Chemical mapping of a 207-nucleotide RNA with 2A3 and DMS.
RNA sequence: GGGAACGACUCGAGUAGAGUCGAAAACCUCACUACAUUUUACUGUUCCUAAAGAAUUUGUGACAGGAACAGUAAAACGUAUUGCAAGGUUUAUCAGUUCCUAUAAACAGGUAAAUAACAAUAUAUGAAAAGCAAAGACUGUUCGCAGUCUUUGCAAGUACAGGUAUAUGUUCGCAUAUACCUGUACAAAAGAAACAACAACAACAAC
Reactivity to 2A3 in 0.01 (KOAc 150mM, MgCl2 10mM, bicine 150mM(pH8.5), 24C), signal-to-noise 8, nucleotides 027 to 156: c000c000u020c010a010c010u010a000c000a020u000u010u000u010a000c000u000g010u000u010c010c000u080a120a130a080g150a260a240u230u280u280g120u120g080a050c070a070g000g000a000a000c000a000g000u000a000a000a000a000c000g000u000a000u000u030g030c090a060a050g040g000u010u020u030a120u110c020a020g020u010u000c000c000u040a070u200a090a110a020c060a010g090g060u090a100a140a100u200a160a040c050a120a050u140a030u080a030u240g090a100a100a020a010g000c010a000a000a000g000a010c010u010g030u050u070c200g000c090a000g010u000c000u000u000u000g000c000a000a000
Reactivity to DMS in 0.01 (KOAc 150mM, MgCl2 10mM, bicine 150mM(pH8.5), 24C), signal-to-noise 2, nucleotides 027 to 156: c000c000u000c040a050c040u010a010c000a030u010u000u000u000a010c000u010g000u000u000c000c000u000a120a180a230g050a240a190u000u000u010g030u010g020a210c220a050g030g010a020a010c000a030g030u000a000a000a000a010c000g000u000a010u000u000g020c080a140a050g000g060u000u000u000a110u010c070a130g030u020u000c020c000u000a130u000a060a080a130c060a120g040g000u000a060a080a070u000a050a130c070a080a090u000a140u000a130u000g000a090a090a100a150g000c000a030a000a010g000a010c000u010g020u000u000c270g070c020a020g030u000c000u000u000u000g020c000a030a060

For DMS, 2,758 sequencing reads were counted. The 2A3 profile rests on 5,566 reads.